Chemical mapping of a 207-nucleotide RNA with DMS and 2A3. For 2A3 the reverse transcriptase was SuperScript II with manganese. For DMS the reverse transcriptase was MarathonRT. For DMS, 2,997 sequencing reads were counted. The RNA was probed in 150 mM KOAc, 10 mM MgCl2 and 150 mM bicine (pH 8.5) at 24 C.

RNA sequence: GGGAACGACUCGAGUAGAGUCGAAAAAUAUAAAGAGGUGUGCAUAGUGUCUGCUACAUAACAUUUCAGUAAACUGUUGCCAUCAUUAUUAUAUUUACUGAUAAGCUAAUGGAGGGUAGAAAAGACUGUUUCCUGUGGUUCUCUGAAAUCAUAAUACGAUAUUGAUGGGUUUCGACCCAUCAAUAUCAAAAGAAACAACAACAACAAC
Reactivity to DMS in 0.01 (KOAc 150mM, MgCl2 10mM, bicine 150mM(pH8.5), 24C), signal-to-noise 2, nucleotides 027 to 156: a110u000a080u010a040a070a140g010a140g020g010u000g000u000g030c030a100u000a100g030u000g020u000c040u000g020c050u010a040c070a120u000a130a080c080a110u000u000u000c000a040g020u000a000a030a040c050u000g000u000u030g040c040c070a140u020c050a090u010u000a120u000u000a070u010a070u000u010u000a120c030u060g010a070u020a050a090g030c010u010a000a070u010g000g010a080g010g000g000u020a030g010a060a070a080a120g020a080c060u000g010u000u000u000c010c010u010g030u000g040g040u000u000c050u000c090u000g000a080a050a050u000c040a060u000a040a070u000a140c140
Reactivity to 2A3 in 0.01 (KOAc 150mM, MgCl2 10mM, bicine 150mM(pH8.5), 24C), signal-to-noise 2, nucleotides 027 to 156: a000u110a010u040a010a050a030g110a010g000g010u030g020u060g000c010a020u020a040g010u010g000u060c050u050g010c010u030a060c040a090u130a070a050c060a090u050u120u100c010a000g020u040a050a040a040c020u070g060u150u040g020c030c000a060u040c040a020u070u140a040u140u020a100u060a030u100u060u020a020c010u010g000a000u010a070a040g040c050u020a070a000u040g010g010a020g010g010g000u030a010g080a030a080a010a000g030a010c020u000g000u030u020u020c000c000u060g000u010g040g010u020u000c060u010c000u060g030a040a020a000u070c090a020u300a230a260u300a070c090